[RMDB]
RNA sequence: GGGAACGACUCGAGUAGAGUCGAAAACCACAAAACCUCUUGCCAGGCCUCAAAGCAAACGUCUCCUUAUCCCAGAGGUCAGAGAACUGCAGGAGAAGCAGUUUGUGGGUGGGUGAAGCAUCAUCAGCUUCCCUGGAAAACCUUUGCAAGGUACUCAAUACUCAGGGUGAUUCGUCACCCUGAGUAUAAAAGAAACAACAACAACAAC
Reactivity to 2A3 in 0.01 (KOAc 150mM, MgCl2 10mM, bicine 150mM(pH8.5), 24C), signal-to-noise 1, nucleotides 027 to 156: c000c000a010c030a000a020a000a000c000c000u000c000u040u040g040c050c080a040g000g020c000c000u060c040a090a080a080g040c090a200a050a120c090g070u000c040u000c040c000u130u110a170u140c010c010c000a000g020a000g010g000u020c070a010g030a010g000a090a010c020u100g000c010a020g010g060a020g020a010a030g060c020a060g010u050u050u060g050u040g000g040g020u070g040g000g010u300g040a010a000g000c010a040u190c040a070u040c100a050g000c000u010u030c000c020c000u000g030g000a080a110a010a010c030c000u060u070u210g030c070a050a020g070g040u080a070c030u030c020a010
Chemical mapping of a 207-nucleotide RNA with 2A3. For 2A3, 571 sequencing reads were counted. The data come from the RNA Mapping Database (RMDB), library OK3TST. 2A3 adducts were read by reverse transcription with SuperScript II with manganese. The reactions ran in a buffer of 150 mM KOAc, 10 mM MgCl2 and 150 mM bicine (pH 8.5), at 24 C.